[RMDB]
RNA sequence: GGGAACGACUCGAGUAGAGUCGAAAAGAAUCUGCAUAUUAGUGGGGAUUUUAGACACUCAAUACUACAUUACAACUGCAAAACACACAUAUGAACUGAUCCAUGUGGGCAGACCUUGCACUUUGGAAGGAUAUCUAUAGUUCGCUAUAGAUAUCCUAAAAGAAACAACAACAACAAC
Reactivity to 2A3 in 0.01 (KOAc 150mM, MgCl2 10mM, bicine 150mM(pH8.5), 24C), signal-to-noise 6, nucleotides 027 to 126: g010a020a050u030c020u100g070c050a030u150a070u180u200a130g060u060g040g040g010g030a030u010u030u030u180a060g030a020c030a010c040u030c020a020a050u060a120c040u020a030c020a050u100u050a050c040a110a020c050u030g010c020a020a040a150a020c050a010c000a000c000a020u050a040u180g080a100a080c060u080g020a030u010c020c000a040u080g010u050g030g050g000c020a010g020a060c010c020u040u080g030c050a080c120u070u070u040g060g050a080
Reactivity to DMS in 0.01 (KOAc 150mM, MgCl2 10mM, bicine 150mM(pH8.5), 24C), signal-to-noise 6, nucleotides 027 to 126: g000a080a050u000c040u000g000c020a040u000a140u010u000a080g050u010g000g000g000g000a060u000u000u000u000a080g000a130c100a070c030u010c040a080a070u010a060c060u000a030c060a040u000u000a050c060a050a070c090u000g000c040a040a010a080a050c090a060c040a050c050a040u000a050u010g010a080a100c080u000g010a090u000c050c030a050u000g020u000g010g000g010c040a030g010a090c070c030u000u000g010c080a050c090u000u000u000g000g010a170